[RMDB]
Structure probing data (DMS and 2A3) for a 177-nucleotide construct. For DMS the reverse transcriptase was MarathonRT. Values are in units of 0.01, from 0 to 300, in steps of 10.
RNA sequence: GGGAACGACUCGAGUAGAGUCGAAAAGCGUAACGAGAAGUGUUGGCUCCGACCAAUUGGGACCCGGUGCCGGCUAUCCGUCUUAAUAAAACUAACCAGCAUCCUGUACAAAUGUCUCCUUGGUUGCCUAUCUCAUUUUAUUCGUAAAAUGAGAUAGAAAAGAAACAACAACAACAAC
Reactivity to DMS in 0.01 (KOAc 150mM, MgCl2 10mM, bicine 150mM(pH8.5), 24C), signal-to-noise 8, nucleotides 027 to 126: g010c130g020u000a090a070c060g000a100g010a070a130g010u010g020u000u000g010g000c010u000c020c040g020a070c040c020a170a140u010u010g010g010g020a100c180c130c040g010g010u000g000c020c010g030g010c020u000a050u000c050c050g000u000c060u000u010a060a080u000a050a060a070a100c110u000a080a090c050c030a060g000c020a040u000c020c030u000g010u000a090c110a040a070a090u000g000u000c030u000c020c050u010u000g010g010u000u000g010c140
Reactivity to 2A3 in 0.01 (KOAc 150mM, MgCl2 10mM, bicine 150mM(pH8.5), 24C), signal-to-noise 7, nucleotides 027 to 126: g040c040g050u080a020a040c040g020a050g010a300a050g070u060g030u140u050g030g000c000u000c030c020g060a060c010c020a130a300u230u160g140g010g010a040c100c050c000g000g010u020g000c020c000g020g000c010u040a050u010c020c020g040u010c040u100u210a200a140u130a070a120a030a020c040u050a040a030c020c010a010g020c000a030u020c010c030u060g010u090a040c040a050a170a040u100g020u000c030u030c040c000u030u040g050g000u060u040g020c000